RNA sequence: GGGAACGACUCGAGUAGAGUCGAAAACCACCGCAUCGAUAUCCCCGGUACGGAUGCACCGCUGGUAGUCGACCAGCCGCUUGCCCGCCGGAUGCUCCGCUCCGAGGAUGUAGGGCACGAGUGGAUGUGUUCACCAGGUAUUCGUACCUGGUGAACAAAAAGAAACAACAACAACAAC
Reactivity to 2A3 in 0.01 (KOAc 150mM, MgCl2 10mM, bicine 150mM(pH8.5), 24C), signal-to-noise 1, nucleotides 027 to 126: c000c000a020c020c030g000c040a220u130c060g050a060u010a010u070c000c030c020c010g030g000u020a020c030g040g000a040u190g020c010a020c020c020g020c020u000g030g030u030a030g070u100c000g040a130c050c050a070g060c000c030g000c000u030u070g040c000c030c000g050c060c010g090g000a040u030g000c010u020c010c000g070c040u000c010c000g020a060g010g000a020u020g000u000a020g000g050g000c050a010c040g040a040g010u040g000g040a140u130g070
Reactivity to DMS in 0.01 (KOAc 150mM, MgCl2 10mM, bicine 150mM(pH8.5), 24C), signal-to-noise 2, nucleotides 027 to 126: c000c010a070c070c060g000c050a110u000c000g010a080u010a050u000c020c000c030c000g000g020u000a080c010g000g010a030u000g030c010a040c030c040g010c020u000g000g000u000a030g020u000c070g000a120c050c120a060g000c050c040g010c060u010u010g010c020c010c020g010c080c070g020g030a100u000g020c030u000c010c030g000c020u000c010c010g000a060g000g000a020u000g010u000a130g000g020g030c100a090c090g020a060g000u000g020g000a090u010g010
Source: RMDB library OK2TRN, as collected in RNAgym. An RNA of 177 nucleotides, treated with 2A3 and DMS and read out base by base. DMS adducts were read by reverse transcription with MarathonRT. The reactions ran in a buffer of 150 mM KOAc, 10 mM MgCl2 and 150 mM bicine (pH 8.5), at 24 C.